[RMDB]
RNA sequence: GGGAACGACUCGAGUAGAGUCGAAAAACAAACCAACUGCGAACGACGAACGUUUCGCCCUCGCCGCUUAAACACCGGUGAGCGUCUCAACGGCAGGCCGAUGGGCCGGGCCCAAGCCGCAAGGUGGAAGGCUGAGACGUCAUGCACAUCGGCUGGUACUAUGCAUAAGGUUCGCCUUAUGCAUAGUAAAAGAAACAACAACAACAAC
Reactivity to 2A3 in 0.01 (KOAc 150mM, MgCl2 10mM, bicine 150mM(pH8.5), 24C), signal-to-noise 5, nucleotides 027 to 156: a000c060a030a070a030c030c020a050a070c100u140g010c010g020a020a010c010g190a030c040g070a210a070c040g060u080u120u080c020g010c030c020c000u000c000g010c000c000g010c030u050u080a030a050a010c020a010c020c000g000g010u010g000a010g010c010g000u010c000u010c010a060a060c020g010g000c020a020g030g060c000c000g000a010u020g010g000g000c000c000g000g000g000c000c000c010a010a000g010c000c000g050c070a060a040g020g000u010g010g020a020a020g000g000c010u020g000a000g010a010c020g040u130c040a080u220g070c130a050c000a080u010c000g010g000c010u010g050g020u040
Reactivity to DMS in 0.01 (KOAc 150mM, MgCl2 10mM, bicine 150mM(pH8.5), 24C), signal-to-noise 2, nucleotides 027 to 156: a040c050a090a080a130c040c030a000a060c090u000g000c010g020a050a090c010g040a070c020g010a030a070c120g030u010u000u010c050g010c010c010c030u000c000g030c000c000g040c040u000u000a130a100a120c100a070c100c000g000g060u000g030a150g010c040g010u000c020u010c030a110a080c030g010g030c000a080g010g010c010c010g020a060u000g040g030g040c000c020g000g030g000c020c010c030a100a130g030c000c000g000c180a070a110g040g000u010g010g000a130a080g000g010c010u010g000a050g030a020c000g000u000c070a100u010g010c080a070c030a050u000c000g010g020c020u000g010g010u000